[RMDB]
RNA sequence: GGGAACGACUCGAGUAGAGUCGAAAACUGACACUCUGUGAGACUCUCUGACUCUCAGUCUCUGAGAGACUCACUGUCACUCUGUCACAGAGACACUCUCUGUGUGUGAGAGACAGAGACUGAGUCAACAAAUAUCGUUUUUCGAAACGAUAUUUGUAAAAGAAACAACAACAACAAC
Reactivity to 2A3 in 0.01 (KOAc 150mM, MgCl2 10mM, bicine 150mM(pH8.5), 24C), signal-to-noise 9, nucleotides 027 to 126: c020u040g050a020c010a010c100u090c040u060g050u030g070a030g020a060c010u020c000u000c030u060g040a040c010u040c010u030c150a020g050u010c030u010c030u080g020a030g000a010g010a050c000u010c020a020c020u010g010u010c010a030c020u030c020u060g210u180c010a010c000a010g020a010g020a110c020a060c190u110c000u000c010u010g000u000g020u030g050u070g040a020g000a010g000a010c010a010g040a000g020a020c050u050g010a010g020u020c020a010
Reactivity to DMS in 0.01 (KOAc 150mM, MgCl2 10mM, bicine 150mM(pH8.5), 24C), signal-to-noise 9, nucleotides 027 to 126: c050u000g010a090c120a100c060u010c040u000g010u000g000a050g010a110c040u000c010u000c040u000g010a070c040u000c080u010c130a050g010u000c030u010c080u010g000a060g000a050g000a070c020u000c030a140c010u000g010u000c020a150c010u000c010u000g000u000c010a020c010a010g000a020g000a230c280a150c240u000c020u000c010u000g020u000g020u000g010u010g000a010g010a100g000a060c020a020g000a090g000a060c130u000g000a020g010u000c070a150